[RMDB]
Chemical mapping of a 207-nucleotide RNA with 2A3. The data come from the RNA Mapping Database (RMDB), library ARCHII. Values cover nucleotides 27 to 156. Reactivities are rounded to 0.1 and cut off at 0 and 3. As a SHAPE reagent, 2A3 marks flexible, mostly unpaired nucleotides at the ribose 2'-OH. The 2A3 profile rests on 358 reads.

RNA sequence: GGGAACGACUCGAGUAGAGUCGAAAACUUAAUCAAGCUAGCAUCAUGUUGGUUGUUUAUCACUUUUCAUGAUGCGAAACCUUUCGAUAAACUACACACGUAGAAAGAUGUGUAUCAGGACCUCUGGACGCGGGUUCAAAUCCCGCCGUCUCCAUUACAUUGCGUAAGGCUUCGGCCUUACGCAAUGAAAAGAAACAACAACAACAAC
Reactivity to 2A3 in 0.01 (KOAc 150mM, MgCl2 10mM, bicine 150mM(pH8.5), 24C), signal-to-noise 1, nucleotides 027 to 156: c000u090u170a020a000u180c040a110a020g140c030u150a120g000c000a000u000c000a000u000g010u060u030g100g000u030u030g110u110u000u110a130u180c000a010c000u300u200u070u000c000a000u000g010a010u000g010c020g020a000a000a000c050c020u080u030u100c110g000a030u020a000a120a000c040u030a000c020a000c080a020c030g190u170a090g120a230a110a030g150a210u050g000u000g000u000a080u080c040a050g010g090a100c070c040u060c140u150g040g000a010c000g020c000g000g000g050u040u100c030a020a020a020u030c000c000c020g020c060c030g000u000c040u000c010c000a020u040u020a040